[RMDB]
RNA sequence: GGGAACGACUCGAGUAGAGUCGAAAAGAUAUGGAUGGUGUUGGGAGCUAUGUGUCGGAAACGACAUGCAUAGCAUCGAUCAAUUAUCCAUCCUAAGUCAAAACGUAGGGUCUUCGGACCCUACGAAGAUCCCAUUUAGGUUCGCCUAAAUGGGAUCAAAAGAAACAACAACAACAAC
Reactivity to 2A3 in 0.01 (KOAc 150mM, MgCl2 10mM, bicine 150mM(pH8.5), 24C), signal-to-noise 4, nucleotides 027 to 126: g020a010u040a010u060g000g000a000u000g000g010u170g010u150u010g020g030g020a070g000c000u000a010u040g040u010g000u020c000g020g010a030a010a020c020g000a000c020a030u130g040c050a030u040a020g010c000a030u300c020g010a060u020c000a000a020u160u140a060u200c010c000a010u000c010c000u000a030a010g010u000c030a010a020a130a150c030g000u000a000g000g000g020u000c000u100u060c300g090g010a010c000c010c000u000a000c000g000a000a010
Reactivity to DMS in 0.01 (KOAc 150mM, MgCl2 10mM, bicine 150mM(pH8.5), 24C), signal-to-noise 4, nucleotides 027 to 126: g000a020u000a080u020g000g000a010u000g010g000u010g010u000u000g010g000g000a020g030c000u010a010u000g010u000g010u000c010g010g000a030a020a050c010g010a020c000a070u020g020c300a030u000a000g010c000a300u000c260g000a030u000c010a010a010u000u020a110u010c000c000a000u010c000c000u010a010a070g000u000c030a100a090a130a180c030g010u000a000g010g000g000u000c000u000u010c290g020g000a010c000c000c010u000a000c000g010a050a070
Chemical mapping of a 177-nucleotide RNA with 2A3 and DMS. The reactions ran in a buffer of 150 mM KOAc, 10 mM MgCl2 and 150 mM bicine (pH 8.5), at 24 C. For DMS the reverse transcriptase was MarathonRT. High 2A3 reactivity points to a flexible backbone, as in loops and unpaired stretches. Source: RMDB library TTRDES, as collected in RNAgym. The 2A3 profile rests on 12,431 reads.